[RMDB]
RNA sequence: GGGAACGACUCGAGUAGAGUCGAAAAGAUAUGGAUAUCGAGUUCUUUGAUCCGUAACAUCAUUCGGAAACGAAUGUGGGGGAGAACGAGAUAUCCUAAGUCAAAGAUCAAACUUCGGUUUGAUCAACCGAAGUACGUAGUUCGCUACGUACUUCGGAAAAGAAACAACAACAACAAC
Reactivity to DMS in 0.01 (KOAc 150mM, MgCl2 10mM, bicine 150mM(pH8.5), 24C), signal-to-noise 2, nucleotides 027 to 126: g000a050u000a300u000g010g030a020u000a010u000c000g000a300g010u000u000c010u000u000u010g000a070u020c010c010g000u000a080a220c190a050u010c000a010u000u000c000g010g000a140a110a140c000g010a040a000u000g000u000g010g020g000g000g000a010g040a010a010c010g000a220g000a000u000a010u000c000c010u000a020a080g030u010c020a080a070a120g000a010u000c010a000a000a020c000u000u000c240g040g010u000u000u000g000a030u000c010a020a120
Reactivity to 2A3 in 0.01 (KOAc 150mM, MgCl2 10mM, bicine 150mM(pH8.5), 24C), signal-to-noise 2, nucleotides 027 to 126: g020a000u040a030u160g000g010a000u000a000u020c010g000a000g020u030u000c000u300u300u090g080a080u050c010c030g100u160a080a100c020a200u300c000a020u000u000c010g030g050a100a020a060c010g000a000a010u030g010u060g000g020g000g000g000a070g000a010a000c000g020a000g000a010u000a010u000c000c000u000a000a010g000u010c020a010a120a080g000a000u020c020a000a000a040c020u080u080c300g060g000u010u010u010g000a000u000c020a000a030
An RNA of 177 nucleotides, treated with DMS and 2A3 and read out base by base. For DMS, 1,501 sequencing reads were counted. For 2A3, 3,352 sequencing reads were counted. The reactions ran in a buffer of 150 mM KOAc, 10 mM MgCl2 and 150 mM bicine (pH 8.5), at 24 C.